[RMDB]
RNA sequence: GGGAACGACUCGAGUAGAGUCGAAAACAGCAACAACGUCUCCAUCUUUGAUUGCAUAAUCAAACCCGUCUUCUGGUGUACCACGUGACGGCGAUACAUUCGGGUGGCAUCCUUCAACAUCGAAUGCGUACGUGCUAGAGUUCGCUCUAGCACGUACAAAAGAAACAACAACAACAAC
Reactivity to DMS in 0.01 (KOAc 150mM, MgCl2 10mM, bicine 150mM(pH8.5), 24C), signal-to-noise 2, nucleotides 027 to 126: c080a120g000c080a110a050c030a090a100c090g020u000c040u000c030c020a050u000c040u000u000u000g000a060u000u000g020c230a070u000a060a030u000c060a030a030a120c150c050c010g000u010c030u000u000c090u000g000g000u010g000u010a040c040c060a060c100g010u000g000a040c060g020g040c060g010a150u000a050c070a090u000u000c020g000g000g000u000g000g010c100a090u000c020c030u000u010c050a050a060c080a030u010c120g000a030a080u000g060c190
Reactivity to 2A3 in 0.01 (KOAc 150mM, MgCl2 10mM, bicine 150mM(pH8.5), 24C), signal-to-noise 2, nucleotides 027 to 126: c000a000g050c010a000a020c000a020a010c070g050u010c000u000c010c010a040u000c080u040u050u050g030a060u030u110g070c040a050u070a200a040u040c040a000a050a100c000c000c000g010u000c050u130u020c030u060g050g000u130g030u130a100c030c010a010c070g030u040g030a010c000g020g000c020g050a010u030a100c000a040u040u120c010g040g030g020u040g000g000c020a050u000c020c000u030u100c040a090a060c000a080u110c030g070a180a050u090g030c020